RNA sequence: GGGAACGACUCGAGUAGAGUCGAAAAGACUUCAUCUACGGAUGAAGUCAGCGAUUCUUCGGAAUCGCAACGGACACACGUGAGUGUGUCCGAACCAUCCACGUACGCGUGGAUGGAAGGUCUGCGUGAGCAGACCAACAACGGAACUUCGGUUCCGUUGAACAAAAAAAAAAACAACACCUCCUCGGUGACGAGGAGAGUAGUACGUACGCGUACUACACAUCCAUACGUGAGUAUGGAUGAUAGGGGCUUACCGAAAUAAGCCUAACGUGAUGUUCGCAUCACGUAAAAGAAACAACAACAACAAC
Reactivity to DMS in 0.01 (KOAc 150mM, MgCl2 10mM, bicine 150mM(pH8.5), 24C), signal-to-noise 4, nucleotides 027 to 266: g000a010c000u000u000c000a010u010c000u000a120c190g010g010a010u000g010a020a000g010u000c010a030g010c000g010a010u000u000c010u000u030c170g020g000a010a010u000c000g000c010a090a070c030g000g010a020c010a000c000a000c000g000u020g000a120g010u000g010u000g020u000c000c000g000a070a130c000c000a000u000c000c000a000c000g000u010a090c200g040c010g040u000g000g000a000u000g000g000a110a090g010g000u000c000u000g000c000g000u030g000a270g030c000a000g000a000c000c000a060a110c010a010a000c000g000g000a010a000c000u000u020c150g020g000u000u000c000c000g010u000u000g000a110a120c000a030a010a010a000a000a000a040a100a110a130a100c120a120a080c160a070c170c000u000c000c000u000c000g000g000u030g010a130c010g010a020g010g010a010g000a070g000u000a000g010u000a000c010g020u000a060c200g020c010g000u000a000c010u000a000c010a260c010a000u000c000c000a000u000a000c020g000u020g000a160g000u000a010u010g000g000a000u000g000a080u030a070g000g010g000g000c010u000u000a030c130c100g010a100a110a300u000a000a010g000c000c000u000a050
Reactivity to 2A3 in 0.01 (KOAc 150mM, MgCl2 10mM, bicine 150mM(pH8.5), 24C), signal-to-noise 8, nucleotides 027 to 266: g000a000c000u010u000c000a000u000c000u020a040c290g090g000a000u000g000a000a000g000u000c000a000g000c000g000a000u000u010c010u040u060c220g100g010a000a000u000c000g000c000a000a040c010g000g000a000c000a000c000a000c010g070u080g120a100g020u000g020u000g000u000c000c000g000a010a010c000c000a000u000c000c010a000c000g030u050a020c290g010c000g150u010g000g000a000u000g000g000a010a050g010g000u000c000u000g000c020g050u120g050a030g010c000a000g000a000c000c000a000a010c000a000a000c000g000g000a010a000c000u050u080c200g120g000u000u000c000c000g000u000u000g020a050a010c090a020a010a010a010a000a000a000a000a010a010a010c150a050a040c060a050c030c010u010c000c000u010c010g050g080u130g100a070c020g010a000g000g010a000g000a000g000u000a000g000u000a000c010g000u010a010c250g010c000g120u000a000c010u010a000c040a000c000a010u000c000c000a010u000a010c020g090u100g100a070g020u010a000u010g000g020a000u000g000a010u080a040g040g020g000g000c020u020u010a030c020c130g070a040a060a100u050a020a000g000c000c010u020a060